[RMDB]
RNA sequence: GGGAACGACUCGAGUAGAGUCGAAAACGCGUUUUUGCUUUCCUUUUUUCAAUUGCUUUGCUUUCCAAACGAGCCACAGCUGUGCAGCAAUGAAAAGCGAAGAAUAUGUGCCGGAAAUUAAACCAGCCGCUUCAUGAAGAUUCGUCUUCAUGAAGCGAAAAGAAACAACAACAACAAC
Reactivity to DMS in 0.01 (KOAc 150mM, MgCl2 10mM, bicine 150mM(pH8.5), 24C), signal-to-noise 2, nucleotides 027 to 126: c130g000c050g030u000u000u010u040u010g000c040u010u000u020c000c010u010u010u010u000u010u000c050a030a070u000u010g030c010u000u000u000g010c010u000u000u030c010c000a000a130a160c150g020a180g000c060c050a040c080a170g000c110u010g020u000g030c130a110g000c060a060a120u000g000a020a030a000a050g020c040g020a040a040g020a070a040u020a040u000g000u020g020c010c050g010g000a030a040a150u000u010a020a090a150c070c030a110g020c050
Reactivity to 2A3 in 0.01 (KOAc 150mM, MgCl2 10mM, bicine 150mM(pH8.5), 24C), signal-to-noise 1, nucleotides 027 to 126: c030g000c010g000u020u050u030u260u290g000c000u000u020u020c000c000u040u060u040u000u020u060c110a100a090u130u110g080c020u080u060u010g010c000u070u030u000c030c020a000a140a110c090g020a010g030c010c000a050c000a070g110c060u100g020u120g060c040a110g000c020a040a030u050g030a040a030a010a000g000c010g020a000a010g030a030a020u080a110u140g060u070g040c020c000g060g140a090a110a170u190u160a090a090a080c070c010a000g020c020
Chemical mapping of a 177-nucleotide RNA with DMS and 2A3.
The reactions ran in a buffer of 150 mM KOAc, 10 mM MgCl2 and 150 mM bicine (pH 8.5), at 24 C.
It was measured as part of the RMDB library OK2TST.